RNA sequence: GGGAACGACUCGAGUAGAGUCGAAAAGGAGGGCAGUUUUUCUGUGUUGCUGUCGUUAGAGGCCGGUUUUGCGACGGCGAGACCUUGAUGCUGAUUCCGGCCUAUUUGCAUCGGUCGUUUGCCUCCAGGCACGUGGCGGGUUCGCUCGCUGCGUGCCAAAAGAAACAACAACAACAAC
Reactivity to 2A3 in 0.01 (KOAc 150mM, MgCl2 10mM, bicine 150mM(pH8.5), 24C), signal-to-noise 9, nucleotides 027 to 126: g040g010a030g010g060g040c040a050g030u060u030u030u100u110c050u050g060u030g040u060u100g000c000u000g000u000c000g010u030u100a050g020a050g050g000c000c000g030g000u030u060u160u300g010c010g000a000c000g000g000c010g000a010g010a010c010c030u050u230g010a010u020g000c020u040g020a040u100u060c000c000g000g000c000c000u020a040u010u070u070g000c010a020u000c010g000g010u000c020g010u040u130u070g050c000c000u000c010c010a010
Reactivity to DMS in 0.01 (KOAc 150mM, MgCl2 10mM, bicine 150mM(pH8.5), 24C), signal-to-noise 5, nucleotides 027 to 126: g000g010a050g020g010g020c040a050g000u010u020u020u010u010c020u010g020u010g010u010u010g000c000u000g010u000c030g020u000u030a050g000a090g010g000c000c010g000g000u020u010u030u030g000c020g000a030c030g010g000c010g010a060g010a030c010c020u020u050g030a020u000g010c010u000g000a130u010u020c010c010g000g000c000c010u010a030u010u030u010g000c020a020u000c010g000g010u010c020g030u020u030u010g010c010c000u000c010c030a180
An RNA of 177 nucleotides, treated with 2A3 and DMS and read out base by base. Values cover nucleotides 27 to 126.